[RMDB]
RNA sequence: GGGAACGACUCGAGUAGAGUCGAAAAUUAAAUGAUGUAGUACGGCCGCCACUGAAGGACGGGUCCUCUCCGAAAGGAGAGUUGAGUAGAGUGUGAGCAGGACCGGCUGCUAGUCACUGGUGAAAAACAAGUAUUAUAGCUUCGGCUAUAAUACUUGAAAAGAAACAACAACAACAAC
Reactivity to DMS in 0.01 (KOAc 150mM, MgCl2 10mM, bicine 150mM(pH8.5), 24C), signal-to-noise 7, nucleotides 027 to 126: u010u010a060a080a070u010g000a060u010g000u000a020g010u000a070c030g010g010c010c010g010c020c010a050c030u000g010a110a120g010g010a060c040g010g010g010u000c080c000u000c000u000c000c000g010a100a080a190g000g010a010g000a010g010u000u000g000a180g010u000a060g000a090g020u010g010u000g010a090g010c020a080g000g000a070c120c020g000g000c020u000g010c010u000a110g010u000c020a030c080u000g010g010u000g000a040a070a060a090a140
Reactivity to 2A3 in 0.01 (KOAc 150mM, MgCl2 10mM, bicine 150mM(pH8.5), 24C), signal-to-noise 3, nucleotides 027 to 126: u130u090a030a070a080u110g040a030u090g030u070a010g000u010a080c020g010g030c000c000g010c000c000a030c000u030g050a070a030g110g040a040c020g040g000g040u030c010c000u010c000u000c010c000g050a070a010a000g010g000a010g000a000g010u020u020g020a020g000u080a020g010a060g030u160g010u020g010a100g000c050a130g000g040a060c010c000g010g010c000u000g000c000u010a040g050u010c030a010c120u070g130g000u130g130a040a060a000a050a040